[RMDB]
RNA sequence: GGGAACGACUCGAGUAGAGUCGAAAAGAAGGGUGAAAGCCCUUGAUACUGUAGUGGAAAUUAUAAAUAAGAAGAGUUCUGAGUUGCUUAAGCAGAACUAAAAUAAAAAGACAAGCAUUUUUACAAACAUGGCGAGGUAAGUUCGCUUACCUCGCAAGAUAAAAUAUGGGUUCGCCCAUAUUUUAUCAAAAGAAACAACAACAACAAC
Reactivity to 2A3 in 0.01 (KOAc 150mM, MgCl2 10mM, bicine 150mM(pH8.5), 24C), signal-to-noise 1, nucleotides 027 to 156: g020a020a000g010g000g000u020g050a060a000a000g010c000c000c050u000u000g020a020u040a090c090u090g040u080a080g070u040g050g110a080a030a070u130u120a100u150a250a120a040u210a000a100g040a070a040g030a000g070u000u000c010u000g010a000g030u090u010g050c000u040u010a080a030g000c000a000g020a000a000c010u020a020a000a000a000u070a030a100a030a000a000g010a030c030a020a010g010c000a020u080u020u070u220u300a170c100a050a110a000c050a150u130g100g000c000g000a000g000g030u010a010a000g000u010u110c100g010c030u020u000a000c000c030u000c000g000c000a000a000